The record gives the reactivity of an RNA of 177 nucleotides to DMS and 2A3. It was measured as part of the RMDB library TTRDES. DMS adducts were read by reverse transcription with MarathonRT.

[RMDB]
RNA sequence: GGGAACGACUCGAGUAGAGUCGAAAAGAUAUGGAACCCAUCAGCUUUUGACGCCUAUGACUCGGAAACGAGUCUAAGGGCGAUAAGCUGAAUGGGUUCCUAAGUCAAAAUCACGCUUCGGCGUGAACUAUUACCCCAACUUCGGUUGGGGUAAUAGAAAAGAAACAACAACAACAAC
Reactivity to DMS in 0.01 (KOAc 150mM, MgCl2 10mM, bicine 150mM(pH8.5), 24C), signal-to-noise 4, nucleotides 027 to 126: g010a050u020a300u000g010g000a000a000c000c000c000a050u000c010a020g010c000u010u000u010u020g030a270c090g020c010c000u020a300u020g010a010c010u000c000g000g000a100a100a220c000g010a010g020u000c010u000a050a150g000g000g020c000g010a060u000a000a000g020c000u000g000a020a040u000g010g010g010u000u000c000c010u000a000a090g000u010c040a070a080a140a150u000c000a020c000g000c000u000u010c200g000g000c010g020u000g000a030a120
Reactivity to 2A3 in 0.01 (KOAc 150mM, MgCl2 10mM, bicine 150mM(pH8.5), 24C), signal-to-noise 3, nucleotides 027 to 126: g010a020u090a040u200g000g000a010a000c000c010c000a010u010c000a000g020c020u060u140u270u300g290a190c050g000c010c020u070a090u190g010a000c000u000c020g000g030a020a110a070c000g010a020g020u050c010u000a040a040g020g010g000c010g000a010u000a000a000g000c000u000g020a030a160u000g000g010g030u000u000c000c000u000a010a010g000u000c000a000a000a030a250u040c000a000c010g010c010u040u090c300g200g000c000g010u010g000a010a000